[RMDB]
RNA sequence: GGGAACGACUCGAGUAGAGUCGAAAAGAUAUGGACGUGGCUAGCUCGAUAAGUCUGAUGUCGGAAACGACAUAGACUUUUGACGAGCAAACCACGUCCUAAGUCAAAAUCAGCGUUCGCGCUGAAAUCAAUGACAGAACUUCGGUUCUGUCAUUGAAAAAGAAACAACAACAACAAC
Reactivity to 2A3 in 0.01 (KOAc 150mM, MgCl2 10mM, bicine 150mM(pH8.5), 24C), signal-to-noise 2, nucleotides 027 to 126: g030a010u050a040u220g010g000a000c000g010u000g000g000c030u030a010g000c000u010c010g050a090u040a090a010g000u030c040u200g300a070u040g030u020c010g030g000a030a100a060c030g000a000c030a010u010a000g000a000c000u030u070u080u050g140a060c050g000a010g040c000a010a000a000c000c000a000c000g020u000c000c000u010a000a000g000u000c000a000a000a010a180u040c010a000g010c030g080u150u180c300g000c000g000c130u010g000a070a010a000
Reactivity to DMS in 0.01 (KOAc 150mM, MgCl2 10mM, bicine 150mM(pH8.5), 24C), signal-to-noise 3, nucleotides 027 to 126: g000a040u010a300u000g000g000a030c020g030u000g000g030c030u000a300g040c000u000c010g030a130u000a020a020g020u010c010u000g000a020u000g000u000c020g000g000a070a060a260c000g000a000c050a010u010a030g020a040c000u010u000u000u000g010a150c160g000a020g000c000a010a090a100c000c010a020c000g000u000c000c000u000a030a080g000u010c040a120a080a170a130u000c000a020g020c000g030u000u010c270g020c020g030c000u010g000a020a100a170